[RMDB]
RNA sequence: GGGAACGACUCGAGUAGAGUCGAAAAUAACAGUGUCCAGGCGUGAAAACGUCUGUUAAUUAGCAAUGACUGUAUGCUAAUUGACUUUUGUGAAAACAAAAGGAUGCUGUUUAACAGUCAUUGAUACGAACUUGUUGUAUUUCGAUAUGACAAGUUCAAAAGAAACAACAACAACAAC
Reactivity to 2A3 in 0.01 (KOAc 150mM, MgCl2 10mM, bicine 150mM(pH8.5), 24C), signal-to-noise 9, nucleotides 027 to 126: u120a000a000c000a010g010u010g010u020c000c000a000g000g000c000g010u030g080a070a040a030a020c000g000u000c000u000g000u000u000a000a000u000u000a000g000c000a010a030u050g000a000c000u000g000u010a010u030g000c000u000a000a000u000u000g010a000c000u000u000u000u000g010u010g070a060a020a000a000c000a000a000a000a000g000g000a000u000g000c000u000g000u000u000u010a010a000c000a000g000u000c000a010u020u200g080a040u050a080c090
Reactivity to DMS in 0.01 (KOAc 150mM, MgCl2 10mM, bicine 150mM(pH8.5), 24C), signal-to-noise 8, nucleotides 027 to 126: u030a010a000c010a000g010u000g010u000c000c000a010g000g000c010g000u010g010a140a060a140a010c000g020u000c000u000g000u000u000a000a010u000u000a000g000c000a050a110u000g000a010c000u000g010u000a200u000g000c000u000a000a000u000u000g010a010c000u000u000u000u000g000u000g000a120a080a130a030c000a000a000a000a000g000g000a010u000g010c000u000g000u000u000u010a070a020c000a000g000u000c000a150u030u030g010a150u040a090c220

Structure probing data (2A3 and DMS) for a 177-nucleotide construct. Reactivities are rounded to 0.1 and cut off at 0 and 3. For 2A3, 63,739 sequencing reads were counted. 2A3 adducts were read by reverse transcription with SuperScript II with manganese. Source: RMDB library OK1LIB, as collected in RNAgym. Values cover nucleotides 27 to 126. DMS adducts were read by reverse transcription with MarathonRT.